An RNA of 177 nucleotides, treated with DMS and 2A3 and read out base by base.
Conditions: 150 mM KOAc, 10 mM MgCl2 and 150 mM bicine (pH 8.5), 24 C.
Source: RMDB libraries RFM100 and RFMREP, as collected in RNAgym.
RNA sequence: GGGAACGACUCGAGUAGAGUCGAAAACAUAUCUCAUUAUUCUCCAGUAAAUGUGAUAAUAAUGUCAUCUGUUAACAUAAAAAAAGUUUGACUUCACAAAAGCAGCUGGAAAUGGACAACCACAAUAAGCUAUUUUAUGAUUCGUCAUAAAAUAGCUAAAAGAAACAACAACAACAAC
Reactivity to DMS in 0.01 (KOAc 150mM, MgCl2 10mM, bicine 150mM(pH8.5), 24C), signal-to-noise 4, nucleotides 027 to 126: c130a110u000a080u000c040u020c020a100u010u020a040u000u030c170u010c010c010a050g000u020a070a080a160u000g020u010g000a030u000a040a070u010a090a090u030g000u000c040a000u000c020u000g010u020u000a100a100c160a160u050a000a000a080a080a110a070a020g020u020u000u000g020a060c020u000u000c040a020c100a050a070a060a060g010c190a070g000c000u000g010g000a050a050a030u000g000g010a050c100a060a090c030c070a040c190a040a060u040a090
Reactivity to 2A3 in 0.01 (KOAc 150mM, MgCl2 10mM, bicine 150mM(pH8.5), 24C), signal-to-noise 9, nucleotides 027 to 126: c020a030u140a090u060c020u010c040a030u020u140a050u120u090c080u010c030c010a000g020u110a040a120a100u040g020u040g050a040u030a200a050u120a080a040u140g010u010c010a020u000c020u020g080u110u110a170a070c080a130u300a100a160a050a020a010a010a010g030u040u030u030g000a010c000u000u000c020a010c000a030a090a030a020g050c040a030g010c010u000g020g000a020a020a030u030g020g020a030c020a070a040c080c030a050c030a080a140u140a120

In probing experiments dimethyl sulfate is read out at A N1 and C N3, which are open when not base-paired.